[RMDB]
RNA sequence: GGGAACGACUCGAGUAGAGUCGAAAAUCCUAGAGAGCUUGGCCGUCGGGCCUUAUACCCGACAUGCUGAGUUUCUCUAGGAGAGUCCCUUUCCCAGCCCUGAGGCGGCUGGUCAAUAAAAGCCUCAAAAACUACCACUGGUUCGCCAGUGGUAGAAGAACGUAACAAUGUUCGCAUUGUUACGUUCAAAAGAAACAACAACAACAAC
Reactivity to 2A3 in 0.01 (KOAc 150mM, MgCl2 10mM, bicine 150mM(pH8.5), 24C), signal-to-noise 1, nucleotides 027 to 156: u000c000c000u000a010g010a000g000a000g000c010u010u010g020g010c010c030g000u000c000g000g030g000c010c050u060u060a160u130a040c000c040c000g000a000c030a030u080g020c000u020g010a000g010u020u300u000c010u020c000u010a000g000g000a020g000a010g030u020c020c000c000u000u120u040c000c000c000a000g000c000c000c040u060g000a000g030g000c020g000g000c010u010g000g080u120c070a020a010u070a160a030a000a000g010c000c000u000c000a000a050a000a000a000c000u000a000c000c000a010c010u000g050g010u040u050c100g040c050c000a000g010u000g010g000u000a000g000a000a000
Overview:
The data come from the RNA Mapping Database (RMDB), library M2RFPK. Structure probing data (2A3) for a 207-nucleotide construct. Reactivities are rounded to 0.1 and cut off at 0 and 3. 2A3 is a SHAPE reagent: it acylates the 2'-hydroxyl of flexible nucleotides of all four kinds. Values cover nucleotides 27 to 156. The reactions ran in a buffer of 150 mM KOAc, 10 mM MgCl2 and 150 mM bicine (pH 8.5), at 24 C.